[RMDB]
RNA sequence: GGGAACGACUCGAGUAGAGUCGAAAAGGGUUUUGCGAUCUUUAAGCAGAUGGCAGGUUCACCCCGUACGGUGCGGAAGUUCGCGUUUCCGUGAAACGCGAAAAUCGGACGGUGGCUGCAAGUCGCAUUGAAGGGAUCGCCUUCGGGCGAUCCCUAACCACGUAUCGAAAUUCGUUUCGAUACGUGGAAAAGAAACAACAACAACAAC
Reactivity to 2A3 in 0.01 (KOAc 150mM, MgCl2 10mM, bicine 150mM(pH8.5), 24C), signal-to-noise 1, nucleotides 027 to 156: g080g010g010u070u140u130u070g010c020g040a040u030c090u030u170u150a250a070g050c050a070g010a130u190g100g070c060a050g000g040u180u120c000a040c000c000c010c010g020u020a000c010g040g070u050g160c110g100g050a120a100g050u040u000c000g000c010g010u000u030u030c070c050g080u120g210a000a030a000c020g040c000g000a040a010a000a040u030c010g000g000a010c050g030g090u090g030g000c000u010g000c010a050a030g030u000c020g030c040a010u020u240g100a070a060g000g000g000a000u000c000g000c000c040u040u090c140g020g000g010c010g000a000u030c000c000c000u000a000a000
Structure probing data (2A3) for a 207-nucleotide construct. Source: RMDB library M2RFPK, as collected in RNAgym. For 2A3 the reverse transcriptase was SuperScript II with manganese.